An RNA of 207 nucleotides, treated with 2A3 and DMS and read out base by base.
The RNA was probed in 150 mM KOAc, 10 mM MgCl2 and 150 mM bicine (pH 8.5) at 24 C.
2A3 adducts were read by reverse transcription with SuperScript II with manganese.
For 2A3, 937 sequencing reads were counted.
RNA sequence: GGGAACGACUCGAGUAGAGUCGAAAAGACGAUUACUACAUUAUUAAAUUAUGAAGUCCGUAUUAUACUCGUAUAUAUUGUUUCUCUCAUGUAUAAUAAUAAACGGAAGAGAUAUAGCACCGCAUGCACCAUCUGAUGGAAAGUGUAAAGACAACGAGUUCCAAUUCAUUUUCGAAUGAAUUGGAACAAAAGAAACAACAACAACAAC
Reactivity to 2A3 in 0.01 (KOAc 150mM, MgCl2 10mM, bicine 150mM(pH8.5), 24C), signal-to-noise 2, nucleotides 027 to 156: g010a010c010g010a010u140u090a090c040u090a020c020a040u080u170a080u160u190a230a160a150u230u150a150u180g020a120a030g030u030c010c000g010u020a060u030u000a010u010a010c040u050c080g020u010a040u000a020u010a050u150u170g030u000u080u000c030u000c010u020c030a050u060g010u000a060u010a040a110u090a050a010u040a030a100a030c010g000g030a000a010g010a070g000a000u030a000u020a170g050c030a010c090c020g030c020a000u020g000c010a000c010c000a020u040c050u070g020a040u060g090g020a120a070a020g010u030g000u040a110a150a010g040a060c070a040a010c120g030a010
Reactivity to DMS in 0.01 (KOAc 150mM, MgCl2 10mM, bicine 150mM(pH8.5), 24C), signal-to-noise 1, nucleotides 027 to 156: g000a070c040g000a250u000u000a070c020u000a040c020a080u030u010a080u010u030a100a130a190u000u030a090u030g020a060a220g000u000c080c020g030u010a080u000u000a030u000a050c040u000c030g000u000a070u000a070u000a060u010u010g000u000u000u000c060u000c070u010c090a110u000g020u000a040u010a020a070u000a070a100u000a080a090a150c010g000g000a060a100g010a160g000a040u000a080u000a140g060c010a070c050c080g000c060a280u000g000c020a070c030c030a180u000c070u000g010a080u000g010g000a080a040a090g010u000g010u000a050a060a100g040a070c150a070a050c130g000a160